[RMDB]
RNA sequence: GGGAACGACUCGAGUAGAGUCGAAAAGGUGGGUGGGUAGAACAUACCGAGGCGAUCGGGUCAACCAUGGUUAAGGAACUCGGCACAAUGGCCCCGUAACUUCGGGAGAAGGGGUGCCCCCGCGUACUGAUCAUAGUAGGUUCGCCUACUAUGAUCAAAAAGAAACAACAACAACAAC
Reactivity to DMS in 0.01 (KOAc 150mM, MgCl2 10mM, bicine 150mM(pH8.5), 24C), signal-to-noise 5, nucleotides 027 to 126: g010g010u020g000g000g010u040g000g020g020u020a070g000a060a080c080a150u030a120c040c010g000a040g010g010c060g000a110u020c060g000g000g000u020c170a090a080c050c000a030u010g000g000u010u010a170a130g020g000a110a090c120u020c070g000g000c140a030c110a050a020u010g000g000c030c000c000c000g000u010a130a110c030u010u010c000g010g010g000a110g010a110a080g020g000g000g000u000g010c020c020c010c010c030g010c140g010u020a090c170
Reactivity to 2A3 in 0.01 (KOAc 150mM, MgCl2 10mM, bicine 150mM(pH8.5), 24C), signal-to-noise 5, nucleotides 027 to 126: g130g020u170g070g060g060u270g040g000g020u060a070g070a110a030c040a050u180a060c010c010g000a000g000g020c050g020a050u160c000g060g000g020u050c080a040a020c010c010a030u070g020g040u110u160a110a060g050g010a070a100c040u030c100g070g000c030a010c020a080a060u040g020g000c000c000c000c000g000u000a030a040c000u010u010c020g020g050g000a060g040a040a020g020g000g010g010u060g010c000c000c000c000c000g030c030g010u040a060c070
The record gives the reactivity of an RNA of 177 nucleotides to DMS and 2A3.
For 2A3 the reverse transcriptase was SuperScript II with manganese.
DMS adducts were read by reverse transcription with MarathonRT.
The reactions ran in a buffer of 150 mM KOAc, 10 mM MgCl2 and 150 mM bicine (pH 8.5), at 24 C.